[RMDB]
This 177-nucleotide RNA was probed chemically with DMS and 2A3.
It was measured as part of the RMDB library TTRDEL.
RNA sequence: GGGAACGACUCGAGUAGAGUCGAAAAGAUAUGGAGUGUGGUGAUGAGCAACAGCUCGGAAACGAGACAUGCUCGCACCCACUCCUAAGUCAAAAGUCUCCGUGUAAGUUCGCUUACACGGAGACAAGAGAUUUUAUUCCUUCGGGAAUAAAAUCUCAAAAGAAACAACAACAACAAC
Reactivity to DMS in 0.01 (KOAc 150mM, MgCl2 10mM, bicine 150mM(pH8.5), 24C), signal-to-noise 1, nucleotides 027 to 126: g000a060u020a300u040g010g000a020g040u010g030u020g040g010u000g010a040u010g010a010g000c020a040a120c190a180g010c020u000c010g000g000a060a070a150c010g020a000g000a070c140a180u000g000c000u000c000g000c000a010c010c010c010a010c000u000c020c000u000a000a120g010u010c010a100a060a130a170g000u000c000u010c000c000g000u000g000u000a010a010g000u000u000c250g010c000u000u000a010c000a010c000g020g000a000g020a000c000a020a040
Reactivity to 2A3 in 0.01 (KOAc 150mM, MgCl2 10mM, bicine 150mM(pH8.5), 24C), signal-to-noise 1, nucleotides 027 to 126: g000a000u070a060u160g000g000a020g010u060g040u300g070g000u050g020a300u090g010a110g000c010a020a170c040a120g000c000u020c010g010g030a030a050a010c000g010a010g000a010c060a050u090g000c010u020c010g000c020a000c000c000c010a000c000u000c000c000u000a000a010g000u000c010a030a010a000a070g000u000c010u000c000c030g010u020g000u050a000a040g010u030u250c300g010c260u000u030a010c000a010c000g000g010a000g000a000c000a000a000
The RNA was probed in 150 mM KOAc, 10 mM MgCl2 and 150 mM bicine (pH 8.5) at 24 C.